An RNA of 177 nucleotides, treated with 2A3 and DMS and read out base by base. Reactivities are given for positions 27 through 126. The DMS profile rests on 1,800 reads. Conditions: 150 mM KOAc, 10 mM MgCl2 and 150 mM bicine (pH 8.5), 24 C. Source: RMDB library TTRDEL, as collected in RNAgym.
RNA sequence: GGGAACGACUCGAGUAGAGUCGAAAAGAUAUGGACAAGAACUACUUCGACGAAGGCGAAGAACUCGGAAACGAGGGAGCCUUCCAAGAAGCUUGUCCUAAGUCAAACCAGCGGUUCGCCGCUGGAAUCAUUUACGCAUGUUCGCAUGCGUAAAUGAAAAAGAAACAACAACAACAAC
Reactivity to 2A3 in 0.01 (KOAc 150mM, MgCl2 10mM, bicine 150mM(pH8.5), 24C), signal-to-noise 2, nucleotides 027 to 126: g030a000u040a060u100g010g000a010c010a000a010g010a140a030c070u280a050c020u300u010c020g040a040c010g000a010a000g000g030c000g180a300a020g050a130a050c010u000c000g010g060a060a090a030c000g000a000g020g000g010a010g000c010c010u010u000c000c000a000a020g000a000a010g000c000u010u010g000u000c000c010u010a100a000g010u000c040a040a060a130c000c010a000g000c010g030g060u090u110c300g050c080c010g000c020u040g000g000a000a060
Reactivity to DMS in 0.01 (KOAc 150mM, MgCl2 10mM, bicine 150mM(pH8.5), 24C), signal-to-noise 3, nucleotides 027 to 126: g010a050u010a300u010g000g000a030c000a010a010g000a090a060c060u030a300c030u010u000c010g020a300c300g000a030a000g010g000c020g020a100a200g010a080a170c000u000c000g000g000a100a070a180c010g000a000g000g000g000a080g050c000c000u000u010c000c030a020a160g010a000a000g000c000u000u000g000u000c020c000u000a040a080g000u000c010a090a120a150c010c000a010g010c010g000g000u000u010c300g020c020c010g000c020u000g000g000a060a060